[RMDB]
RNA sequence: GGGAACGACUCGAGUAGAGUCGAAAACAACCCAACUCCUACUUAAUACGUCCUCGUCGUACAGAACGGUAACAUGUUUUCCGAACAUCCGCGCUUGGGUAUACGAGUAUACACCUUACCCAACCCUCCAACCACCUAAAGUUCGCUUUAGGUGGAAGUUAAGGGUCCUGUUCGCAGGACCCUUAACAAAAGAAACAACAACAACAAC
Reactivity to 2A3 in 0.01 (KOAc 150mM, MgCl2 10mM, bicine 150mM(pH8.5), 24C), signal-to-noise 2, nucleotides 027 to 156: c030a020a070c000c010c000a040a080c050u100c030c040u060a100c050u140u190a220a090u080a100c040g070u030c010c000u010c020g040u040c030g010u050a030c000a100g030a150a060c040g000g040u140a060a060c020a120u130g050u020u010u060u040c040c030g010a040a030c010a040u080c020c050g080c020g020c090u050u020g020g000g060u000a040u000a000c090g040a030g100u010a050u040a110c100a070c050c040u020u050a040c000c000c000a010a000c000c000c000u010c000c050a050a060c000c000a000c000c000u000a000a000a000g010u020u100c150g030c080u010u000u000a010g000g010u020g020g000a000a000
Notes:
An RNA of 207 nucleotides, treated with 2A3 and read out base by base. The reactions ran in a buffer of 150 mM KOAc, 10 mM MgCl2 and 150 mM bicine (pH 8.5), at 24 C. The 2A3 profile rests on 755 reads. 2A3 adducts were read by reverse transcription with SuperScript II with manganese.